The record gives the reactivity of an RNA of 207 nucleotides to 2A3 and DMS. The DMS profile rests on 6,159 reads. For 2A3, 1,422 sequencing reads were counted. The reactions ran in a buffer of 150 mM KOAc, 10 mM MgCl2 and 150 mM bicine (pH 8.5), at 24 C.
RNA sequence: GGGAACGACUCGAGUAGAGUCGAAAAUUGUAUUUUUAGCAGAGAUGGGGUUUCACCCUGUUGCCCCAGGCUGGUCUCAAACUCCUGGACUCAAGUGAUCUGCUCGCCUUAGCCUCCCAAAGCGCUGGGAUUACAGGCAUGAGCCAUCACACCUGGCUAGAACUAGUAAGUUCGCUUACUAGUUCUAAAAAGAAACAACAACAACAAC
Reactivity to 2A3 in 0.01 (KOAc 150mM, MgCl2 10mM, bicine 150mM(pH8.5), 24C), signal-to-noise 3, nucleotides 027 to 156: u040u030g050u020a100u020u090u020u080u120a050g010c040a020g020a030g020a060u070g000g000g000g030u020u120u130c040a060c030c030c000u030g020u040u060g000c000c020c020c010a000g040g000c040u070g000g040u080c040u040c100a110a160a080c040u030c020c030u060g050g030a060c050u030c200a130a130g020u000g030a050u020c040u090g000c040u010c020g020c000c000u020u050a030g030c030c010u020c000c010c020a030a090a010g200c190g040c150u050g010g010g030a010u020u110a020c060a040g000g000c010a030u180g010a010g010c030c030a050u030c030a000c010a010c010c030u010g030g010c020
Reactivity to DMS in 0.01 (KOAc 150mM, MgCl2 10mM, bicine 150mM(pH8.5), 24C), signal-to-noise 2, nucleotides 027 to 156: u000u010g030u010a080u000u000u000u000u000a090g030c010a120g020a070g010a050u010g020g020g030g020u000u000u000c090a060c040c030c010u020g010u010u000g010c050c040c020c000a040g010g030c040u000g000g030u000c040u000c030a050a040a110c050u000c010c010u000g030g040a060c020u000c060a040a110g010u000g020a050u000c060u010g020c040u000c030g000c010c000u000u000a110g000c050c060u000c000c000c000a040a080a110g040c120g010c100u000g010g010g020a090u000u000a070c160a030g000g010c010a020u000g010a100g000c020c210a070u000c040a060c080a100c030c020u010g020g010c090